[RMDB]
RNA sequence: GGGAACGACUCGAGUAGAGUCGAAAAUGCCACGUACGCGCUGACUUUCGACGUGUUCAGGUCACGGCCGUCGCGGGAUAACUGGAUGUACGGCGUUUCGUACAGCAGCGUAUCGAGCGGCGUAAUGAUAGACGAUGUCUGCGUCACUUGGUGCGGCAACCAAGACAGAAUUCGUUCUGUCUUGGUUAAAAGAAACAACAACAACAAC
Reactivity to 2A3 in 0.01 (KOAc 150mM, MgCl2 10mM, bicine 150mM(pH8.5), 24C), signal-to-noise 7, nucleotides 027 to 156: u100g030c020c000a040c030g050u100a040c010g030c010g030c070u040g030a050c050u110u210u130c130g040a030c010g080u080g020u100u130c080a080g010g080u060c020a020c060g050g000c020c000g000u000c010g000c020g060g160g020a030u030a060a030c010u020g050g070a250u030g080u030a020c000g000g090c140g120u060u150u300c010g010u030a010c000a010g010c000a000g020c040g110u010a010u010c030g020a020g010c010g010g000c010g000u020a050a070u120g080a040u050a070g070a040c090g060a090u070g010u010c010u020g000c000g000u020c010a010c040u020u020g010g010u030g010c010g000g020c000
Reactivity to DMS in 0.01 (KOAc 150mM, MgCl2 10mM, bicine 150mM(pH8.5), 24C), signal-to-noise 2, nucleotides 027 to 156: u010g040c000c010a050c070g000u000a040c030g010c030g040c020u010g000a050c070u000u000u000c050g020a020c050g010u000g000u020u010c060a200g010g010u010c030a110c050g010g020c080c050g040u000c000g010c040g030g000g010a050u010a060a090c030u000g030g010a200u010g000u000a010c010g000g020c300g020u000u010u010c000g000u050a020c030a060g000c010a050g000c000g000u000a030u000c010g010a110g000c000g010g010c010g020u000a050a040u020g000a080u000a090g000a140c090g000a140u000g030u000c050u000g000c030g000u010c010a090c080u000u010g010g020u000g020c050g000g020c010